[RMDB]
RNA sequence: GGGAACGACUCGAGUAGAGUCGAAAAGAUAUGGAUAGAGGCAACAGCGUGCCCUCGGAAACGAGGGACACGACAUGCCUCGUCCUAAGUCAAAAUCACGUGCCAUGGUUCGCCAUGGCACGUGAAAGUUACUGCUUACGUUCGCGUAAGCAGUAACAAAAGAAACAACAACAACAAC
Reactivity to 2A3 in 0.01 (KOAc 150mM, MgCl2 10mM, bicine 150mM(pH8.5), 24C), signal-to-noise 2, nucleotides 027 to 126: g020a010u050a010u090g010g000a020u140a300g010a080g000g000c010a080a050c090a300g120c030g000u010g010c010c000c010u000c010g000g010a030a000a000c000g000a000g010g040g090a010c000a010c000g050a040c010a010u020g000c000c000u000c000g010u000c000c000u000a040a000g030u000c020a000a000a010a300u050c000a000c010g000u010g000c000c000a010u000g000g080u050u090c290g020c060c010a000u000g000g030c010a000c000g010u000g010a000a010a000
Reactivity to DMS in 0.01 (KOAc 150mM, MgCl2 10mM, bicine 150mM(pH8.5), 24C), signal-to-noise 3, nucleotides 027 to 126: g000a020u000a220u000g020g000a010u000a070g020a010g020g010c000a020a120c300a160g020c010g010u000g000c000c000c000u000c010g000g000a050a030a100c000g020a010g000g000g000a050c010a000c000g020a070c150a160u010g000c000c000u000c010g000u000c000c010u000a020a110g000u020c010a100a100a110a170u000c000a000c020g010u000g000c000c000a010u000g000g000u000u020c240g020c000c010a000u010g000g000c000a000c000g000u000g000a000a020a090